Source information
This 207-nucleotide RNA was probed chemically with 2A3. It was measured as part of the RMDB library ARCHII. The 2A3 profile rests on 1,266 reads.
RNA sequence: GGGAACGACUCGAGUAGAGUCGAAAAUCCGAUGCGGCAAUGUAAUCUGGUCAUGUGACCUCGCCUUGACCGCCAUUAGGGGAGAUUCAUCCAGCGAUGGCAAAGGCGACCCGUGAGAGAGGCGACUGGGAUGGCACUGUUCUUAGGGUUAACAAGUCAGUUGUAAGCAGUUCGCUGCUUACAACUGAAAAGAAACAACAACAACAAC
Reactivity to 2A3 in 0.01 (KOAc 150mM, MgCl2 10mM, bicine 150mM(pH8.5), 24C), signal-to-noise 2, nucleotides 027 to 156: u030c000c010g010a060u090g020c030g020g000c020a050a070u080g030u190a120a080u090c060u150g010g020u040c080a100u240g160u220g090a050c010c000u000c020g020c000c000u010u010g110a140c100c110g040c000c010a020u060u110a170g020g040g110g000a010g040a110u270u180c080a100u060c130c000a090g100c050g050a020u000g000g000c000a040a000a000g010g000c000g000a010c020c000c010g040u090g010a040g000a010g010a000g010g010c020g050a040c060u050g010g000g090a010u080g020g000c000a010c060u030g020u060u030c030u040u050a020g010g030g070u020u030a040a040c050a080a020g100u020